[RMDB]
RNA sequence: GGGAACGACUCGAGUAGAGUCGAAAAGAUAUGGAAGCGUGUAUGCAGCGUUGAAAUGGGAUCGGAAACGAUCCCAUGGAGCUGGUACCGCUUCCUAAGUCAAAAUCGACCCACUUCGGUGGGUCGACCACUUUGAAUUGUUCGCAAUUCAAAGUGGAAAAGAAACAACAACAACAAC
Reactivity to 2A3 in 0.01 (KOAc 150mM, MgCl2 10mM, bicine 150mM(pH8.5), 24C), signal-to-noise 3, nucleotides 027 to 126: g020a020u080a030u150g000g000a000a020g020c020g030u140g090u250a040u180g300c050a000g010c030g150u260u040g010a020a030a000u000g000g020g000a010u000c010g000g010a030a060a020c010g010a010u020c000c000c000a000u000g000g000a000g000c000u010g000g030u010a000c020c000g000c010u010u020c010c000u000a000a010g010u010c020a000a000a010a300u030c010g000a010c010c010c000a000c000u050u090c230g140g000u010g010g000g000u000c000g000a000
Reactivity to DMS in 0.01 (KOAc 150mM, MgCl2 10mM, bicine 150mM(pH8.5), 24C), signal-to-noise 3, nucleotides 027 to 126: g000a060u000a300u000g000g000a000a000g000c000g000u030g020u000a010u000g010c050a020g000c010g010u000u020g000a120a120a010u000g010g000g000a020u010c010g010g000a100a080a210c000g020a000u000c000c000c000a000u000g000g010a070g010c010u010g000g010u000a000c010c000g010c010u000u000c000c000u000a010a060g010u000c040a090a080a150a190u000c010g010a010c010c000c000a010c000u010u020c220g030g000u000g010g030g010u000c000g000a010

An RNA of 177 nucleotides, treated with 2A3 and DMS and read out base by base. As a SHAPE reagent, 2A3 marks flexible, mostly unpaired nucleotides at the ribose 2'-OH.